RNA sequence: GGGAACGACUCGAGUAGAGUCGAAAAUCAACAUCGCUUCAGCGCGUAGUGCGUUCGUCCGAGCGACGUCCUGCGAGACCUCCGAGUGGCGCAUUACAAGUUUCGUUAACGUCGAGGAGAGAACGGUAGCAAGGUAGUAGUCACCGUCGAGGAUCAAAGACAGUGAAGUGUUCGCACUUCACUGUCUAAAAGAAACAACAACAACAAC
Reactivity to 2A3 in 0.01 (KOAc 150mM, MgCl2 10mM, bicine 150mM(pH8.5), 24C), signal-to-noise 2, nucleotides 027 to 156: u030c000a010a020c010a020u060c030g010c010u260u150c050a100g020c020g000c060g050u100a050g070u060g120c090g030u070u050c060g080u110c120c030g070a020g130c020g030a020c000g000u000c020c010u070g020c060g020a040g060a180c010c040u040c000c000g000a010g090u060g030g000c000g010c050a020u010u020a010c000a030a190g000u010u000u130c060g000u000u010a030a110c030g020u030c020g080a060g100g020a040g040a000g000a100a000c050g030g000u100a020g010c050a100a050g090g010u060a040g020u000a020g020u000c000a020c090c000g000u020c000g000a020g030g030a100u120c000a010a080
Annotation:
Source: RMDB library OK3TST, as collected in RNAgym. An RNA of 207 nucleotides, treated with 2A3 and read out base by base. The RNA was probed in 150 mM KOAc, 10 mM MgCl2 and 150 mM bicine (pH 8.5) at 24 C. For 2A3 the reverse transcriptase was SuperScript II with manganese. The 2A3 profile rests on 786 reads.